[RMDB]
Source: RMDB library RNAMAK, as collected in RNAgym. An RNA of 207 nucleotides, treated with 2A3 and read out base by base. The reactions ran in a buffer of 150 mM KOAc, 10 mM MgCl2 and 150 mM bicine (pH 8.5), at 24 C. For 2A3 the reverse transcriptase was SuperScript II with manganese.
RNA sequence: GGGAACGACUCGAGUAGAGUCGAAAACCGUAGGAUAAACGAUUCUACUUGGAUUUAUUGGACUAUGCCAUUUCGAAAGAGAUGGCACGAAUCCAAUUGUCAGUAGGGUUUAUCCUAAACGGAAAUCCCGUAAAGUAGUUCGCUACUUUACGGGAAAGACGUCGCAUAAGUUCGCUUAUGCGACGUCAAAAGAAACAACAACAACAAC
Reactivity to 2A3 in 0.01 (KOAc 150mM, MgCl2 10mM, bicine 150mM(pH8.5), 24C), signal-to-noise 2, nucleotides 027 to 156: c020c000g020u010a000g000g000a000u010a020a010a040c040g210a300u120u150c000u010a010c030u110u250g240g030a090u300u300u060a000u000u120g040g000a020c020u040a010u000g010c000c000a000u000u000u000c030g030a110a100a060g010a000g000a000u010g000g000c010a000c020g000a000a090u030c000c000a000a000u010u010g000u000c020a000g000u000a000g030g090g000u000u000u000a000u000c000c000u000a040a050a000c020g040g030a040a080a100u020c000c000c000g000u000a000a000a000g010u010a000g020u090u130c280g010c130u000a000c000u000u000u000a000c010g010g000g010a000a000a010